[RMDB]
RNA sequence: GGGAACGACUCGAGUAGAGUCGAAAACUUAGGCUGGUGGGGCUGCGGCAAGAAGCGGGUCUGUUUCUUUACUUCCUCCACGGAGUCGGCACACUAUGGCUGCCCUCUGGGCUCCCAGAACCCACAAAUUUCUGAUACAGUUCGCUGUAUCAGAAAUAAAAGAAACAACAACAACAAC
Reactivity to DMS in 0.01 (KOAc 150mM, MgCl2 10mM, bicine 150mM(pH8.5), 24C), signal-to-noise 3, nucleotides 027 to 126: c070u010u010a070g000g020c050u000g020g020u000g000g010g010g000c050u010g000c070g000g010c090a060a080g010a080a070g010c070g010g020g020u000c040u020g010u000u000u000c010u010u000u010a080c080u010u000c020c010u000c040c060a110c060g010g000a040g020u010c060g000g010c070a080c090a080c170u010a080u000g020g000c100u000g000c010c000c030u000c120u010g000g020g000c030u010c060c010c020a090g000a080a150c020c010c020a080c180a080a090
Reactivity to 2A3 in 0.01 (KOAc 150mM, MgCl2 10mM, bicine 150mM(pH8.5), 24C), signal-to-noise 1, nucleotides 027 to 126: c030u070u060a060g050g040c020u030g060g010u100g000g000g000g000c010u100g020c040g050g020c030a040a020g030a020a030g060c070g020g090g040u040c010u070g020u020u080u000c010u000u080u040a080c020u070u060c020c010u050c000c050a010c070g020g020a010g020u090c030g000g000c020a010c000a000c050u100a080u210g110g000c050u010g050c000c020c000u060c050u030g040g020g010c020u020c000c010c000a040g060a110a090c020c060c000a000c050a030a190